RNA sequence: GGGAACGACUCGAGUAGAGUCGAAAAGAUAUGGACCUGUCCAGAGCGUGAGGUUCGGAAACGAACCGAACGCGACGAAGGAGCAGGUCCUAAGUCAAACUGCUCCGAAGUUCGCUUCGGAGCAGAAUCAUCGCCAAAAGUUCGCUUUUGGCGAUGAAAAAGAAACAACAACAACAAC
Reactivity to DMS in 0.01 (KOAc 150mM, MgCl2 10mM, bicine 150mM(pH8.5), 24C), signal-to-noise 1, nucleotides 027 to 126: g000a020u000a020u010g000g000a010c010c010u000g020u000c000c010a040g000a020g000c000g120u000g000a300g000g000u000u000c000g000g020a000a000a040c000g000a010a020c000c000g010a110a010c010g010c000g000a060c300g000a030a090g010g000a080g020c040a010g010g010u000c000c000u000a000a050g000u000c000a100a060a260c030u000g000c000u000c000c000g000a000a010g010u000u000c250g000c000u010u000c010g000g000a010g000c010a020g000a040a090
The record gives the reactivity of an RNA of 177 nucleotides to DMS. In probing experiments dimethyl sulfate is read out at A N1 and C N3, which are open when not base-paired. The RNA was probed in 150 mM KOAc, 10 mM MgCl2 and 150 mM bicine (pH 8.5) at 24 C. It was measured as part of the RMDB library TTRDEL.